[RMDB]
RNA sequence: GGGAACGACUCGAGUAGAGUCGAAAAAGGGAGGUGAUGUCAGCAAUCGGCCGCUCAGUGUCUCGGAGCAGGUGUCUGUGCUGAUCGAGGAAGCCACCAGCCUUGAUAAGCUGGCGCAGAUGUAUGACAAAGGUACCCUAUUCGUAGGGUACCUUUGAAAAGAAACAACAACAACAAC
Reactivity to 2A3 in 0.01 (KOAc 150mM, MgCl2 10mM, bicine 150mM(pH8.5), 24C), signal-to-noise 2, nucleotides 027 to 126: a000g110g020g010a090g040g000u100g020a080u070g030u040c010a000g000c020a050a150u180c050g030g000c020c010g000c010u020c020a080g040u070g120u150c050u060c120g050g020a030g010c090a110g010g010u050g020u010c080u160g070u010g040c000u000g000a000u020c010g010a030g020g010a020a020g020c010c020a020c010c010a010g010c020c010u060u030g020a050u030a110a000g020c040u060g030g000c010g000c020a000g000a100u120g040u130a080u070g000a000
Reactivity to DMS in 0.01 (KOAc 150mM, MgCl2 10mM, bicine 150mM(pH8.5), 24C), signal-to-noise 6, nucleotides 027 to 126: a090g010g010g020a090g000g010u000g010a100u000g010u010c030a030g020c030a060a300u010c030g010g000c010c020g000c010u000c020a080g010u010g010u000c110u000c080g010g000a030g010c030a060g080g010u010g000u010c020u010g020u000g010c000u000g000a030u000c100g010a100g020g010a100a100g010c080c030a070c020c010a060g000c010c010u000u000g010a100u010a100a230g000c050u000g000g010c290g010c060a070g000a060u000g000u010a090u010g010a240
This 177-nucleotide RNA was probed chemically with 2A3 and DMS. The DMS profile rests on 8,513 reads. The 2A3 profile rests on 2,490 reads. Reactivities are rounded to 0.1 and cut off at 0 and 3.